[RMDB]
RNA sequence: GGGAACGACUCGAGUAGAGUCGAAAACUGCGUAACGGGCAUGGACAUUUCAUCAAGGCCAGCCAGCACCUGAUCGGCUAUCGCCUGGGCCUCGAGGUUUUGGAGCAUCGACAGACUGUCCAGCAACGGAUUUGCAUCGACACCGGUCAGUUCGCACAUUCUUAAAGGACUUCGGUCCUUUAAGAAUAAAAGAAACAACAACAACAAC
Reactivity to 2A3 in 0.01 (KOAc 150mM, MgCl2 10mM, bicine 150mM(pH8.5), 24C), signal-to-noise 3, nucleotides 027 to 156: c030u040g000c040g050u050a120a020c060g030g010g010c140a210u070g050g000a020c050a080u150u160u080c040a100u140c070a150a050g070g000c010c000a000g020c000c000a010g040c020a050c000c020u040g020a090u060c020g000g010c050u070a020u240c090g050c060c060u030g000g030g000c000c000u030c020g070a070g050g020u070u070u090u090g110g020a040g000c020a020u100c030g030a010c030a090g100a090c030u060g010u000c010c000a010g000c020a040a120c040g050g010a040u060u110u180g040c060a060u060c050g020a010c010a030c040c000g010g010u020c020a040g030u080u050c040g020c030a030c020
Reactivity to DMS in 0.01 (KOAc 150mM, MgCl2 10mM, bicine 150mM(pH8.5), 24C), signal-to-noise 2, nucleotides 027 to 156: c020u000g010c020g030u000a090a070c040g010g030g000c040a130u030g070g020a090c060a150u000u000u000c110a130u000c080a070a080g000g010c000c040a110g020c040c020a100g030c070a080c150c000u010g000a070u000c040g010g020c030u000a130u000c080g000c030c000u000g020g010g030c050c040u000c020g020a100g000g020u000u000u020u010g040g000a150g030c070a120u000c020g010a090c030a070g020a060c120u010g020u000c000c020a140g000c030a060a070c010g000g020a150u010u000u010g010c040a200u000c020g010a090c050a050c010c020g030g010u000c020a070g020u000u000c030g020c040a100c150

Conditions: 150 mM KOAc, 10 mM MgCl2 and 150 mM bicine (pH 8.5), 24 C.
The record gives the reactivity of an RNA of 207 nucleotides to 2A3 and DMS.
Values cover nucleotides 27 to 156.
It was measured as part of the RMDB library OK3TST.
For DMS the reverse transcriptase was MarathonRT.